Chemical mapping of a 207-nucleotide RNA with DMS and 2A3.
[RMDB]
RNA sequence: GGGAACGACUCGAGUAGAGUCGAAAAGUUACGCAGCAACUGCCAUGCAAUGCUGUUGAAAAAACAAGUGGGGUUUGUCGAGUUCGCGUAAUUCGAACAGUCUUGUCUUCUGACGAUAAAUGAAGACUACGCACGUAGUCCGCACUAUGGAAAUCAAUCAUAUUGGCAUGUUCGCAUGCCAAUAUGAAAAAGAAACAACAACAACAAC
Reactivity to DMS in 0.01 (KOAc 150mM, MgCl2 10mM, bicine 150mM(pH8.5), 24C), signal-to-noise 3, nucleotides 027 to 156: g040u000u000a070c100g030c000a090g040c030a100a050c010u010g040c030c070a100u000g010c000a150a180u000g010c020u000g020u000u000g000a010a050a070a110a050a060c060a050a120g000u010g030g030g040g020u000u000u000g010u000c050g010a080g030u010u000c020g030c040g020u000a050a050u000u000c020g000a050a070c050a110g000u000c020u000u000g010u000c010u000u000c030u000g000a090c030g010a160u000a040a040a030u010g000a020a010g000a020c000u000a040c120g010c110a120c080g030u000a050g010u000c030c060g020c090a070c050u000a120u000g000g000a140a080a110u000c070a080a260
Reactivity to 2A3 in 0.01 (KOAc 150mM, MgCl2 10mM, bicine 150mM(pH8.5), 24C), signal-to-noise 4, nucleotides 027 to 156: g030u020u110a110c100g000c010a020g000c010a030a070c040u020g000c010c040a040u140g010c020a060a040u030g000c010u010g020u140u220g060a050a040a030a000a000a010c050a040a030g010u030g000g030g000g000u000u040u070g010u020c000g010a010g030u010u020c010g000c030g130u190a010a040u070u030c010g010a030a020c000a010g010u000c000u040u010g000u000c010u030u000c010u020g030a080c060g230a300u020a020a030a030u040g000a010a000g000a000c000u030a010c040g010c030a040c090g010u030a010g070u050c040c020g070c010a040c090u060a060u100g060g070a030a120a010u060c040a000a040
Conditions: 150 mM KOAc, 10 mM MgCl2 and 150 mM bicine (pH 8.5), 24 C. High DMS reactivity at an A or C suggests that its Watson-Crick edge is free. Reactivities are given for positions 27 through 156.